[RMDB]
RNA sequence: GGGAACGACUCGAGUAGAGUCGAAAACUGCAACUGAGCACUUUUUGGCACACACCGCACUGCACCUCGCCCUUCCCCGGGACGUCAACGUUUCCCUCACGGGCACGCUUACGAGGGAAUUGCACCAUAACGGGUCUGAAUUCGUUCAGACCCGUUAAAAAGAAACAACAACAACAAC
Reactivity to DMS in 0.01 (KOAc 150mM, MgCl2 10mM, bicine 150mM(pH8.5), 24C), signal-to-noise 2, nucleotides 027 to 126: c000u000g000c110a060a120c040u010g010a120g000c080a110c090u000u020u000u020u000g000g040c030a020c050a110c090a090c110c080g000c010a070c030u000g000c050a040c030c010u000c090g000c040c020c020u010u010c050c010c000c090g040g000g010a050c000g000u010c080a040a030c070g000u020u000u000c000c000c010u000c040a120c110g000g000g030c100a060c100g000c000u010u020a120c080g000a070g000g000g000a040a050u010u050g000c060a080c100c020a170
Reactivity to 2A3 in 0.01 (KOAc 150mM, MgCl2 10mM, bicine 150mM(pH8.5), 24C), signal-to-noise 2, nucleotides 027 to 126: c030u060g050c030a040a060c070u120g030a050g060c010a020c050u010u060u040u170u130g040g000c030a030c000a000c000a010c030c020g000c040a030c030u050g020c010a080c000c000u020c020g050c000c000c000u030u020c050c020c000c000g000g000g030a060c000g050u060c050a040a070c030g000u020u050u060c000c000c000u000c010a030c050g050g000g000c050a020c090g060c010u030u030a060c050g010a050g000g000g060a010a030u090u070g020c030a020c050c010a060
Source: RMDB library OK1LIB, as collected in RNAgym. Chemical mapping of a 177-nucleotide RNA with DMS and 2A3. For DMS, 2,354 sequencing reads were counted. 2A3 adducts were read by reverse transcription with SuperScript II with manganese. Reactivities are given for positions 27 through 126. For 2A3, 1,514 sequencing reads were counted. High 2A3 reactivity points to a flexible backbone, as in loops and unpaired stretches.